[RMDB]
RNA sequence: GGGAACGACUCGAGUAGAGUCGAAAAGAGCUAGUUCGCUAGCUCAAAAACCGUAGGACCAACCCGACGAUCUAUGGUCAAAAUAAUUCGAAAGAGUUAUGAACCGGCCAUAGGGAGGCAAGGUCCUAAACGGAAAAAAACCGUCUUCGGACGGUAACCAUAUUCACGUGUUCGCACGUGAAUAUGGAAAAGAAACAACAACAACAAC
Reactivity to DMS in 0.01 (KOAc 150mM, MgCl2 10mM, bicine 150mM(pH8.5), 24C), signal-to-noise 1, nucleotides 027 to 156: g000a040g010c000u020a020g000u040u000c300g120c020u010a000g000c000u130c000a000a040a060a130a120c000c030g050u000a020g000g000a060c020c000a110a240c300c010c010g000a050c100g020a080u000c000u000a040u000g000g000u010c020a140a160a300a030u000a000a000u000u000c040g000a150a230a300g000a030g000u000u000a000u000g000a280a200c060c110g000g070c000c000a070u000a010g000g010g020a110g050g010c040a030a300g000g000u010c000c000u000a000a060a130c000g030g050a000a020a130a050a020a000a020c000c000g050u000c000u000u000c270g070g010a010c000g000g000u000a000a010
Reactivity to 2A3 in 0.01 (KOAc 150mM, MgCl2 10mM, bicine 150mM(pH8.5), 24C), signal-to-noise 1, nucleotides 027 to 156: g010a000g000c010u010a000g000u120u000c150g040c120u010a010g010c000u030c020a140a050a000a000a000c000c000g020u010a010g040g010a030c020c000a010a040c000c010c000g080a150c010g000a060u000c000u000a000u000g010g000u000c000a000a000a000a060u000a000a010u010u010c020g060a110a060a030g010a080g000u000u010a000u050g090a050a020c070c040g010g020c010c000a000u000a000g000g000g000a020g000g000c010a020a110g000g000u010c020c020u020a000a080a030c030g030g000a050a020a020a000a030a030a110c010c000g000u010c010u040u040c200g060g000a000c000g000g000u030a000a050
An RNA of 207 nucleotides, treated with DMS and 2A3 and read out base by base. For 2A3, 1,869 sequencing reads were counted. The reactions ran in a buffer of 150 mM KOAc, 10 mM MgCl2 and 150 mM bicine (pH 8.5), at 24 C. DMS adducts were read by reverse transcription with MarathonRT. Reactivities are given for positions 27 through 156.